[RMDB]
RNA sequence: GGGAACGACUCGAGUAGAGUCGAAAAUAGCUUUUCGAAGCUACACUUGUCCUAAGUCUUACCUGAGAGCGUCAUCGAUCGCAAGGGUCGGAAACGACCUGAUGACCGGGAGACGCUCGAAAGGUAAGAUAUGGAAAUAGACUGGGUUCGCCCAGAACCUAGUUCAAACUUUCGAGUUUGAACUAGGAAAAGAAACAACAACAACAAC
Reactivity to DMS in 0.01 (KOAc 150mM, MgCl2 10mM, bicine 150mM(pH8.5), 24C), signal-to-noise 1, nucleotides 027 to 156: u000a080g000c040u000u000u000u040c170g060a030a040g000c000u000a050c000a140c000u030u000g010u000c000c020u000a030a300g020u000c010u000u030a030c000c000u000g000a300g050a000g040c000g060u020c000a080u000c030g000a000u000c010g060c040a110a300g030g000g020u000c000g030g030a230a150a290c010g000a030c000c000u000g020a130u000g000a010c000c000g020g000g000a130g040a000c020g030c000u000c000g010a050a100a020g020g040u000a030a020g040a020u000a050u000g000g000a050a110a130u000a070g020a140c010u020g000g010g040u010u010c140g070c020c000c000a070g000a110a140
Reactivity to 2A3 in 0.01 (KOAc 150mM, MgCl2 10mM, bicine 150mM(pH8.5), 24C), signal-to-noise 4, nucleotides 027 to 156: u050a010g000c020u110u060u050u110c270g110a040a000g010c010u060a030c070a030c090u160u250g080u080c000c000u040a130a050g020u000c010u000u010a010c000c000u040g000a040g000a000g080c000g020u010c010a130u020c020g070a000u060c010g020c120a080a110g020g000g000u000c000g010g040a070a050a080c000g000a000c000c000u020g000a080u210g020a020c040c010g030g000g030a300g000a010c000g000c010u000c000g000a020a000a000g000g000u000a000a000g000a000u000a010u030g020g020a000a030a050u140a070g130a080c020u030g010g000g060u050u120c210g110c030c000c010a000g010a010a020